This 207-nucleotide RNA was probed chemically with 2A3 and DMS.
It was measured as part of the RMDB library M2RFPK.
The reactions ran in a buffer of 150 mM KOAc, 10 mM MgCl2 and 150 mM bicine (pH 8.5), at 24 C.
[RMDB]
RNA sequence: GGGAACGACUCGAGUAGAGUCGAAAAUGUGGAUGUCCUGCUCGGGGCGGAAGCAUUAAAACCAUUCGAGCUAGUCAAUGCGUGGCGUGUCUCUCCGCAGCGUGUUGGCGAAUGUAAAGAGUGACUAUUGACCACGCAACGUUCGCGUUGCGUGGAAUCAUCCUAUUGUGUUCGCACAAUAGGAUGAAAAAGAAACAACAACAACAAC
Reactivity to 2A3 in 0.01 (KOAc 150mM, MgCl2 10mM, bicine 150mM(pH8.5), 24C), signal-to-noise 5, nucleotides 027 to 156: u060g000u030g050g060a070u100g010u020c010c010u050g020c030u020c030g020g000g000g000c050g050g020a020a010g020c010a010u090u140a020a030a000a060c070c040a050u100u120c040g000a010g000c010u020a010g000u000c000a000a010u000g010c000g010u030g160g000c000g000u020g000u000c000u000c000u000c000c000g000c010a050g000c020g000u040g000u000u000g000g000c010g000a000a010u030g040u140a010a010a010g010a010g020u010g000a000c020u050a110u090u250g100a090c010c010a000c010g000c000a000a000c000g040u070u080c210g010c010g110u000u010g000c000g000u000g000g000a000a000
Reactivity to DMS in 0.01 (KOAc 150mM, MgCl2 10mM, bicine 150mM(pH8.5), 24C), signal-to-noise 3, nucleotides 027 to 156: u020g010u000g010g010a300u010g010u000c010c020u000g020c170u010c130g020g010g050g000c000g020g000a300a300g000c030a040u010u010a040a120a100a160c040c030a110u010u010c000g020a080g000c030u000a110g000u000c000a020a010u000g010c000g010u000g020g030c000g010u000g020u000c100u000c030u000c140c000g010c000a050g010c010g000u000g000u000u000g010g010c010g000a100a040u000g030u000a060a070a070g000a060g020u010g010a110c060u000a150u000u010g000a180c000c000a000c010g000c020a040a020c000g000u000u000c300g020c070g020u000u000g010c000g040u000g010g000a000a030